RNA sequence: GGGAACGACUCGAGUAGAGUCGAAAAUUGGACUCUAUUCGCAAUUGUAAAAGAUCCUUCUAACUGGGGCAUACAUCCCGAAACACCCUCUUUUUUUCCCCCGUCAGCGUGUCUGGUAACACAUUAAGAUAAUGUAACAGUUCGCUGUUACAUUAUCAAAAGAAACAACAACAACAAC
Reactivity to DMS in 0.01 (KOAc 150mM, MgCl2 10mM, bicine 150mM(pH8.5), 24C), signal-to-noise 4, nucleotides 027 to 126: u030u010g010g020a030c000u010c010u000a000u010u010c010g010c250a070a060u000u000g000u010a090a070a120a090g010a070u010c020c020u000u010c080u000a090a090c180u010g010g000g010g020c080a100u000a090c110a080u000c020c010c010g010a070a080a070c110a060c040c030c020u000c000u010u000u000u000u010u000u000c010c010c020c030c040g000u010c080a030g010c070g020u000g010u000c030u000g000g000u010a050a040c070a040c090a050u000u000a050a130
Reactivity to 2A3 in 0.01 (KOAc 150mM, MgCl2 10mM, bicine 150mM(pH8.5), 24C), signal-to-noise 2, nucleotides 027 to 126: u050u040g060g000a000c000u000c010u010a010u000u000c010g000c020a030a130u130u030g050u150a030a050a060a060g050a060u040c030c000u040u030c040u020a050a040c040u040g000g000g060g010c020a010u040a130c040a050u070c000c000c020g050a050a080a010c020a050c000c070c000u050c100u020u090u010u020u000u080u060c000c000c000c000c000g060u030c030a000g040c010g050u030g010u070c030u020g000g000u060a060a010c030a000c000a010u000u020a020a020